This 207-nucleotide RNA was probed chemically with DMS and 2A3. The RNA was probed in 150 mM KOAc, 10 mM MgCl2 and 150 mM bicine (pH 8.5) at 24 C. DMS adducts were read by reverse transcription with MarathonRT. The data come from the RNA Mapping Database (RMDB), library OK3TST.

[RMDB]
RNA sequence: GGGAACGACUCGAGUAGAGUCGAAAAUAACGUGCGGGUUCGAGUUUGGGGUUAGUUUUAGAUUUAGGUUUACAUUUAUAUGCUCGGUUGAAGGUGAAUUGUAGCGGAGACUCGAGUAUGGCGUGUAAUGUGGGUUAAAAUUUAAAUGGAAGGUGGGCUAGUUUAUUAGAUUCGUCUAAUGAAUUAGAAAAGAAACAACAACAACAAC
Reactivity to DMS in 0.01 (KOAc 150mM, MgCl2 10mM, bicine 150mM(pH8.5), 24C), signal-to-noise 3, nucleotides 027 to 156: u010a050a090c070g030u010g000c050g020g020g000u000u000c050g000a090g030u000u000u000g010g000g020g020u010u000a040g000u000u010u000u010a090g010a050u000u000u000a090g020g010u000u000u000a050c040a070u000u000u000a180u010a070u040g030c010u000c050g010g040u000u000g010a210a170g000g010u010g010a090a110u000u010g020u000a160g010c040g000g010a300g010a070c020u000c030g040a080g030u000a060u010g010g030c300g000u010g020u000a020a050u010g040u000g000g000g020u000u000a030a060a100a080u000u000u000a020a060a080u000g000g000a040a050g010g000u010g010g000g010
Reactivity to 2A3 in 0.01 (KOAc 150mM, MgCl2 10mM, bicine 150mM(pH8.5), 24C), signal-to-noise 3, nucleotides 027 to 156: u060a020a020c020g010u030g020c030g010g020g030u080u090c050g010a030g060u070u110u120g040g000g020g010u040u070a040g020u030u050u060u090a050g010a060u070u040u080a020g010g000u030u030u030a010c010a010u020u160u140a140u090a010u100g010c010u010c000g000g070u010u030g030a060a030g050g020u080g100a140a080u160u160g050u080a010g070c010g080g030a030g010a030c000u030c190g000a000g000u040a050u050g010g020c040g000u020g000u030a020a040u060g030u030g000g000g050u020u040a010a090a030a070u080u160u110a010a050a010u020g020g000a010a020g010g000u020g000g020g000